[RMDB]
Structure probing data (2A3) for a 177-nucleotide construct. Source: RMDB library OK1LIB, as collected in RNAgym. Values cover nucleotides 27 to 126. 2A3 adducts were read by reverse transcription with SuperScript II with manganese.
RNA sequence: GGGAACGACUCGAGUAGAGUCGAAAAGCAAUCUGACAACGCAUCGACCAAGCUGAAGGAGGUGGUCCGGGUAGGCCAGCCCGAAUCCAGUAAAUUAGGGUGAGGGAGUCUGCUCGGCGUUAUCUCGAUGGCCUGACUGGUUCGCCAGUCAGGCCAUAAAAGAAACAACAACAACAAC
Reactivity to 2A3 in 0.01 (KOAc 150mM, MgCl2 10mM, bicine 150mM(pH8.5), 24C), signal-to-noise 1, nucleotides 027 to 126: g030c000a090a000u210c060u270g090a000c200a210a000c040g090c000a010u230c000g020a000c000c000a190a000g040c000u110g200a200a000g190g030a160g030g000u050g000g000u000c000c000g030g000g000u000a000g000g020c000c000a140g000c150c000c000g000a000a000u000c000c040a080g100u200a070a170a300u170u210a050g000g000g030u000g000a000g000g000g070a080g000u000c000u000g000c000u000c000g000g000c000g000u000u000a030u090c000u000c000g070